RNA sequence: GGGAACGACUCGAGUAGAGUCGAAAAAUGAAGUUUGCAACAUUCAUAGAAAUGAGCAUGUAGCUAGUGGUGAUGCUAUCAUGACUAGAUGUCUCGCUAUACAUGACUGUUUUGUCAAACGUGUUGAUUGGUCAAUUGUGUACCCUUUUAUUGACAAGUGAAGUAGAGAUUUCGAUCUCUACUUCACAAAAGAAACAACAACAACAAC
Reactivity to 2A3 in 0.01 (KOAc 150mM, MgCl2 10mM, bicine 150mM(pH8.5), 24C), signal-to-noise 4, nucleotides 027 to 156: a000u170g040a130a040g010u010u020u030g010c000a010a000c010a030u000u020c010a010u030a060g070a020a070a020u080g000a010g010c010a020u080g060u200a050g060c060u020a020g020u010g130g020u030g040a090u150g270c130u190a030u090c010a000u040g150a050c010u020a020g020a090u040g120u070c000u010c040g000c030u080a050u020a100c010a010u020g000a010c020u010g070u100u100u070u050g140u170c030a020a020a010c040g020u030g000u030u020g010a300u000u090g050g000u020c020a020a030u030u050g060u040g050u270a140c000c010c000u000u030u000u080a020u050u010g030a010c000a090a080
Reactivity to DMS in 0.01 (KOAc 150mM, MgCl2 10mM, bicine 150mM(pH8.5), 24C), signal-to-noise 2, nucleotides 027 to 156: a110u020g000a110a150g010u000u000u010g000c020a060a060c010a020u000u010c010a060u010a100g000a160a100a100u010g020a080g030c010a010u010g020u000a040g050c020u000a120g080u000g030g030u010g010a190u000g020c150u000a050u010c020a030u010g010a040c030u010a030g010a050u000g020u000c010u010c000g000c050u000a130u000a180c150a050u010g000a040c100u000g010u010u000u000u040g020u020c020a020a020a020c030g020u010g000u000u000g000a140u000u000g020g000u010c000a020a060u000u000g010u000g010u000a080c000c010c010u020u000u000u000a180u030u000g010a040c040a060a300
This 207-nucleotide RNA was probed chemically with 2A3 and DMS. It was measured as part of the RMDB library OK3TST. As a SHAPE reagent, 2A3 marks flexible, mostly unpaired nucleotides at the ribose 2'-OH. For 2A3 the reverse transcriptase was SuperScript II with manganese. For DMS the reverse transcriptase was MarathonRT. The RNA was probed in 150 mM KOAc, 10 mM MgCl2 and 150 mM bicine (pH 8.5) at 24 C.